[RMDB]
RNA sequence: GGGAACGACUCGAGUAGAGUCGAAAAGAUAUGGAGUCACUAUAUCUUGGAUUUAGUUCACUAUAUAACUCGGAAACGAGUUAUACGAAUGAACUUGUCAGAUAAAGUGACUCCUAAGUCAAACUGAGAUAACCUAGUUCGCUAGGUUAUCUCAGAACAAAGAAAUCAACUUCGGUUGAUUUCUUUGAAAAGAAACAACAACAACAAC
Reactivity to DMS in 0.01 (KOAc 150mM, MgCl2 10mM, bicine 150mM(pH8.5), 24C), signal-to-noise 2, nucleotides 027 to 156: g020a150u000a210u000g030g000a040g000u000c010a020c000u000a230u000a010u000c010u000u020g030g000a030u010u020u000a010g020u000u000c010a020c040u010a110u000a000u000a010a030c000u000c000g020g000a150a120a280c000g000a010g030u010u000a010u000a020c000g020a040a020u010g010a020a020c000u000u000g010u010c020a050g000a030u000a010a120a020g020u000g000a000c000u000c010c000u000a000a040g030u000c030a160a170a190c000u010g010a030g000a010u000a000a020c000c010u000a010g020u000u020c300g040c010u000a000g020g000u000u000a000u000c000u010c010a020g000a120a190
Reactivity to 2A3 in 0.01 (KOAc 150mM, MgCl2 10mM, bicine 150mM(pH8.5), 24C), signal-to-noise 6, nucleotides 027 to 156: g020a020u070a050u150g000g000a010g010u000c000a000c000u030a020u000a010u140c040u050u180g090g000a050u270u250u120a000g000u000u000c000a000c030u000a010u000a010u000a110a010c000u000c000g000g040a070a080a050c010g000a000g000u000u000a000u000a000c010g100a150a300u020g000a000a000c000u010u010g010u010c010a020g000a010u010a010a100a000g000u000g000a000c000u000c000c000u000a000a000g010u000c020a020a050a080c010u000g000a000g000a000u000a000a000c000c000u000a000g010u030u050c210g020c160u000a000g000g000u000u000a000u000c000u010c000a000g000a000a000
Chemical mapping of a 207-nucleotide RNA with DMS and 2A3. Conditions: 150 mM KOAc, 10 mM MgCl2 and 150 mM bicine (pH 8.5), 24 C.